This 177-nucleotide RNA was probed chemically with DMS and 2A3. Conditions: 150 mM KOAc, 10 mM MgCl2 and 150 mM bicine (pH 8.5), 24 C. DMS adducts were read by reverse transcription with MarathonRT. For 2A3, 2,215 sequencing reads were counted. Values cover nucleotides 27 to 126.
RNA sequence: GGGAACGACUCGAGUAGAGUCGAAAAGAUAUGGACCAUGAAGCGCGAAGAACGCACGGGCUGACGUAACAUCAAUCGGAAACGAUUGUGGUCAGCCCGUGCGGGAGCGUGGAAGUGGUCCUAAGUCCAUUGGUGUCAAGUUCGCUUGACACCAAUGAAAAGAAACAACAACAACAAC
Reactivity to DMS in 0.01 (KOAc 150mM, MgCl2 10mM, bicine 150mM(pH8.5), 24C), signal-to-noise 2, nucleotides 027 to 126: g000a060u000a300u010g030g010a030c020c010a020u000g010a300a290g000c040g010c000g040a120a130g030a120a270c000g030c000a020c000g000g020g010c000u000g030a010c030g000u010a050a150c220a040u010c000a030a010u000c000g020g010a170a080a200c020g020a030u000u000g010u000g000g010u000c000a030g000c030c020c020g000u010g000c000g000g000g020a040g010c000g050u000g000g010a150a140g000u000g000g010u000c000c000u000a000a110g010u010c050
Reactivity to 2A3 in 0.01 (KOAc 150mM, MgCl2 10mM, bicine 150mM(pH8.5), 24C), signal-to-noise 1, nucleotides 027 to 126: g120a000u090a100u220g000g000a020c040c000a100u300g020a040a010g040c030g010c030g270a300a050g010a080a060c000g050c010a010c020g000g020g020c040u010g000a020c050g170u240a140a080c060a300u240c050a020a000u010c000g040g000a130a130a060c020g000a010u020u010g030u040g000g000u030c000a000g000c020c000c000g000u000g000c030g010g000g000a010g000c010g000u050g030g000a100a000g030u020g010g000u010c010c020u000a020a000g000u040c050